[RMDB]
RNA sequence: GGGAACGACUCGAGUAGAGUCGAAAAGAUAUGGAGGUAGGGCGAUAAGCUGAUGUCGGAAACGACAUUCAGCUUUUGACGCCUGUUCUCCUAAGUCAAAACACGCCGAGCUUCGGCUCGGCGUGAACUUUUUAACCUUCUUCGGAAGGUUAAAAAGAAAAGAAACAACAACAACAAC
Reactivity to DMS in 0.01 (KOAc 150mM, MgCl2 10mM, bicine 150mM(pH8.5), 24C), signal-to-noise 1, nucleotides 027 to 126: g020a000u000a220u010g000g000a000g000g000u010a160g010g000g000c000g020a150u020a000a010g020c000u000g000a020u000g020u000c000g020g000a070a040a120c000g010a000c000a000u000u010c000a030g000c000u010u000u000u000g030a200c070g020c000c000u000g000u020u020c000u000c000c000u000a010a080g010u010c000a120a080a130a180c010a000c020g000c010c000g000a030g000c000u000u020c270g010g000c000u010c030g000g000c010g020u000g000a020a080
The record gives the reactivity of an RNA of 177 nucleotides to DMS. The RNA was probed in 150 mM KOAc, 10 mM MgCl2 and 150 mM bicine (pH 8.5) at 24 C. For DMS the reverse transcriptase was MarathonRT.